[RMDB]
RNA sequence: GGGAACGACUCGAGUAGAGUCGAAAAUUAAGCAAUUUGUAAGGGUUGAGGGGGGCAAGUUCUAAACAGCUCACUUACUUGAUAGCUACAAAUGAUAUACAGUAGAAAUUCUAAUUAAUACCAUCAUAAAUAUUCCUCUCCCUCUAGACAUAGAAAAGUAAUAUUAGCUAUUCGUAGCUAAUAUUACAAAAGAAACAACAACAACAAC
Reactivity to 2A3 in 0.01 (KOAc 150mM, MgCl2 10mM, bicine 150mM(pH8.5), 24C), signal-to-noise 2, nucleotides 027 to 156: u100u040a060a020g030c050a020a050u050u110u080g040u150a070a060g050g020g050u140u100g060a010g000g020g000g000g000g000c020a040a040g020u000u000c020u090a080a010a030c000a010g040c000u000c000a020c020u010u070a020c000u040u090g040a020u040a140g030c030u010a010c020a010a180a010u090g040a020u010a010u020a160c050a020g030u070a000g100a020a100a020u160u050c050u080a100a120u100u100a050a050u100a160c030c040a000u110c010a010u120a180a240a000u100a150u040u020c000c000u030c010u000c000c000c020u000c000u070a010g010a020c050a080u080a010g160a080a060a010a000
Reactivity to DMS in 0.01 (KOAc 150mM, MgCl2 10mM, bicine 150mM(pH8.5), 24C), signal-to-noise 1, nucleotides 027 to 156: u010u010a100a100g030c030a060a090u020u000u000g020u040a060a040g000g000g000u010u000g020a090g000g000g010g020g010g050c040a060a090g020u010u000c020u000a040a080a050c050a080g000c050u020c010a100c080u000u000a060c100u000u000g010a080u000a020g020c070u000a300c080a070a050a060u030g010a040u010a130u000a140c090a090g020u000a090g000a090a100a110u000u000c010u000a050a070u000u000a060a110u010a040c010c000a050u010c020a100u000a030a090a100u000a120u000u000c030c000u000c010u010c000c040c000u000c020u010a090g000a090c030a130u000a140g000a080a080a060a300

Conditions: 150 mM KOAc, 10 mM MgCl2 and 150 mM bicine (pH 8.5), 24 C. This 207-nucleotide RNA was probed chemically with 2A3 and DMS. The DMS profile rests on 2,519 reads. For 2A3 the reverse transcriptase was SuperScript II with manganese. The data come from the RNA Mapping Database (RMDB), library OK3TST. Reactivities are rounded to 0.1 and cut off at 0 and 3.